[RMDB]
RNA sequence: GGGAACGACUCGAGUAGAGUCGAAAAGCCGUGCCUUCGCCGAACCGAUAGGGGCCGCCGACACCAUCAACAAAUAUGUCGGCCGGCUUAUCGUCCAGCUGAUCGAGGAGCUUCAGAAAAAGGGGCUAUUAAUACGACCGUUCGCGGUCGUAUUAAUAAAAGAAACAACAACAACAAC
Reactivity to DMS in 0.01 (KOAc 150mM, MgCl2 10mM, bicine 150mM(pH8.5), 24C), signal-to-noise 3, nucleotides 027 to 126: g010c050c020g050u000g000c040c000u000u010c070g070c030c030g030a090a130c160c010g010a050u020a030g000g010g010g010c010c010g000c000c030g000a030c010a030c210c180a130u040c110a130a080c270a050a090a080u020a160u000g000u000c020g000g010c070c040g010g000c010u010u020a030u020c020g000u010c030c070a100g000c010u020g030a100u030c010g010a070g000g000a120g020c020u010u000c040a090g030a000a030a110a090a130g000g030g000g010c030u000
Reactivity to 2A3 in 0.01 (KOAc 150mM, MgCl2 10mM, bicine 150mM(pH8.5), 24C), signal-to-noise 4, nucleotides 027 to 126: g060c030c000g030u060g050c040c020u060u060c030g020c040c030g050a070a040c020c000g010a030u110a090g150g040g060g000c000c000g010c010c010g010a000c000a020c040c050a090u140c070a060a150c060a090a150a030u300a040u170g000u000c000g020g000c080c000g000g000c000u000u050a060u020c020g050u030c040c000a020g020c010u030g020a050u040c040g000a010g030g030a030g010c000u070u060c040a040g110a130a090a020a020a000g060g020g000g000c010u000
An RNA of 177 nucleotides, treated with DMS and 2A3 and read out base by base. For DMS the reverse transcriptase was MarathonRT. The reactions ran in a buffer of 150 mM KOAc, 10 mM MgCl2 and 150 mM bicine (pH 8.5), at 24 C. For DMS, 4,396 sequencing reads were counted. The 2A3 profile rests on 2,808 reads. Values cover nucleotides 27 to 126.